The record gives the reactivity of an RNA of 177 nucleotides to DMS. Values cover nucleotides 27 to 126. The RNA was probed in 150 mM KOAc, 10 mM MgCl2 and 150 mM bicine (pH 8.5) at 24 C.
[RMDB]
RNA sequence: GGGAACGACUCGAGUAGAGUCGAAAAGAUAUGGAUAGCAUUAAAUCUAUGUGUACUUUUGACGAGUACAGGUCGGAAACGACCUGAAUACUCGAUAAGUACCAUAGAUUUAAUGCUAUCCUAAGUCGUAUGAUGUAGGCUUCGGCCUACAUCAUACAAAAGAAACAACAACAACAAC
Reactivity to DMS in 0.01 (KOAc 150mM, MgCl2 10mM, bicine 150mM(pH8.5), 24C), signal-to-noise 2, nucleotides 027 to 126: g010a100u020a300u010g000g010a000u000a000g020c000a020u000u000a000a020a020u000c000u020a010u000g000u010g000u000a000c000u010u000u000u000g020a230c090g000a020g030u000a050c000a010g000g050u010c000g010g000a130a130a300c010g000a000c010c000u000g000a110a110u000a000c010u010c010g020a030u020a010a020g010u000a000c000c000a020u000a000g000a010u000u010u000a000a000u000g010c000u010a000u010c000c010u010a000a070g020u010c080